This 207-nucleotide RNA was probed chemically with DMS and 2A3. The RNA was probed in 150 mM KOAc, 10 mM MgCl2 and 150 mM bicine (pH 8.5) at 24 C. For DMS the reverse transcriptase was MarathonRT. Source: RMDB library OK3TST, as collected in RNAgym. For 2A3, 2,055 sequencing reads were counted.

RNA sequence: GGGAACGACUCGAGUAGAGUCGAAAAAUAAUGAGUGUCAGGGUCAAUUCCCAGUGGGGCUGAAUGUUCAGUUUCUGAGACCUAAGCACCACUGUGAAGCAUGUAUCCAUGACUAUGGGCCUGGAGCUUCAGAACGGUGUCUAUGAGAUUAAAAUACCAAGUGGUAUCAGUUCGCUGAUACCACUUGAAAAGAAACAACAACAACAAC
Reactivity to DMS in 0.01 (KOAc 150mM, MgCl2 10mM, bicine 150mM(pH8.5), 24C), signal-to-noise 2, nucleotides 027 to 156: a160u000a060a100u000g020a130g040u000g020u010c010a140g010g060g000u010c040a060a150u000u000c000c030c000a040g040u000g020g010g040g060c020u000g020a120a140u010g010u000u000c030a070g010u010u010u000c020u020g010a130g000a060c050c020u000a240a080g020c000a030c000c000a040c010u000g000u000g010a030a010g020c040a110u010g000u010a110u010c010c020a050u010g020a090c020u000a120u000g020g000g010c050c040u010g000g000a120g030c040u000u000c020a060g000a060a110c030g040g000u000g010u010c020u000a040u000g000a150g000a110u010u000a000a060a060a160u010a160c190
Reactivity to 2A3 in 0.01 (KOAc 150mM, MgCl2 10mM, bicine 150mM(pH8.5), 24C), signal-to-noise 3, nucleotides 027 to 156: a000u260a030a100u120g040a010g080u090g020u030c020a020g010g000g010u010c010a040a050u010u000c040c040c010a000g010u010g010g000g010g000c020u010g020a070a030u070g030u030u010c020a020g050u040u130u180c090u030g010a020g020a060c000c010u010a020a000g020c000a000c020c000a010c010u000g000u020g010a000a010g040c140a060u100g040u140a030u010c030c060a090u030g010a020c000u040a120u090g050g000g010c000c010u020g030g040a020g020c010u070u080c060a040g050a130a020c050g050g020u040g040u040c050u070a110u120g050a040g010a040u100u160a070a240a080a030u300a080c240